The record gives the reactivity of an RNA of 177 nucleotides to 2A3 and DMS. The RNA was probed in 150 mM KOAc, 10 mM MgCl2 and 150 mM bicine (pH 8.5) at 24 C. The DMS profile rests on 3,367 reads. Reactivities are given for positions 27 through 126. It was measured as part of the RMDB library TTRDEL.
RNA sequence: GGGAACGACUCGAGUAGAGUCGAAAAGAUAUGGAAAGGGACAUGCUCGAUCCAUCGGAAACGAUGGUAGAGAGCAACAGCCACUUUCCUAAGUCAAAAGUCAGGCACCCUUCGGGGUGCCUGACAACUAGUACAACUAGUUCGCUAGUUGUACUAGAAAAGAAACAACAACAACAAC
Reactivity to 2A3 in 0.01 (KOAc 150mM, MgCl2 10mM, bicine 150mM(pH8.5), 24C), signal-to-noise 2, nucleotides 027 to 126: g010a010u060a000u160g000g000a020a020a010g000g000g020a040c020a090u120g000c000u020c010g030a090u030c000c010a000u000c000g030g000a050a060a020c020g000a000u000g020g050u300a020g100a000g000a000g160c010a000a040c020a030g060c010c000a300c140u010u000u030c010c000u000a090a000g030u000c020a120a080a060a040g010u010c020a020g130g000c060a000c000c030c000u060u130c300g090g010g000g000u020g010c040c010u000g010a010c020a000a010
Reactivity to DMS in 0.01 (KOAc 150mM, MgCl2 10mM, bicine 150mM(pH8.5), 24C), signal-to-noise 4, nucleotides 027 to 126: g010a030u010a300u000g000g000a000a000a020g010g000g020a030c030a270u000g000c000u000c000g000a300u000c000c000a000u010c000g000g000a100a100a190c000g010a010u000g000g010u010a040g010a300g000a020g000c000a010a040c230a140g030c000c000a050c000u000u000u000c000c000u000a050a100g010u010c010a040a060a150a100g010u010c000a010g010g000c000a020c000c020c000u000u010c180g030g020g020g020u000g020c000c000u010g000a000c010a010a050